[RMDB]
RNA sequence: GGGAACGACUCGAGUAGAGUCGAAAAGCAAGGCCAAGAGGAAGCCCUCGGGCUUCUGCGCAGGCGUUCGAGGGCGGCCCGUCCGAUGCCCGCGGGUAGGCCGCUAGAGCCUGUCGGCGACGGCAGGGCUAAAGUACUUGUUCGCAAGUACUUUAGCAAAAGAAACAACAACAACAAC
Reactivity to 2A3 in 0.01 (KOAc 150mM, MgCl2 10mM, bicine 150mM(pH8.5), 24C), signal-to-noise 2, nucleotides 027 to 126: g060c050a030a100g100g000c000c010a060a030g050a050g110g010a030a010g000c010c010c040u080c140g020g020g000c000u020u010c010u020g020c060g010c040a030g010g000c040g040u090u100c090g070a130g030g100g000c020g000g030c000c000c000g010u000c010c000g020a030u100g090c010c040c000g050c020g010g010g020u040a030g010g000c000c020g000c010u010a010g010a020g100c000c000u000g000u020c020g020g010c030g010a040c020g000g000c000a010g000g020
Reactivity to DMS in 0.01 (KOAc 150mM, MgCl2 10mM, bicine 150mM(pH8.5), 24C), signal-to-noise 6, nucleotides 027 to 126: g020c090a100a070g010g010c010c020a090a170g010a250g000g000a030a030g010c020c000c000u020c300g040g010g000c010u000u000c010u000g000c190g010c140a100g010g000c080g000u000u010c110g010a140g010g000g010c000g010g010c010c010c010g010u000c000c010g010a100u010g000c030c020c050g010c000g000g010g010u000a040g010g010c000c010g000c030u000a060g000a130g010c010c000u010g010u000c010g010g010c210g010a170c040g010g000c010a040g000g000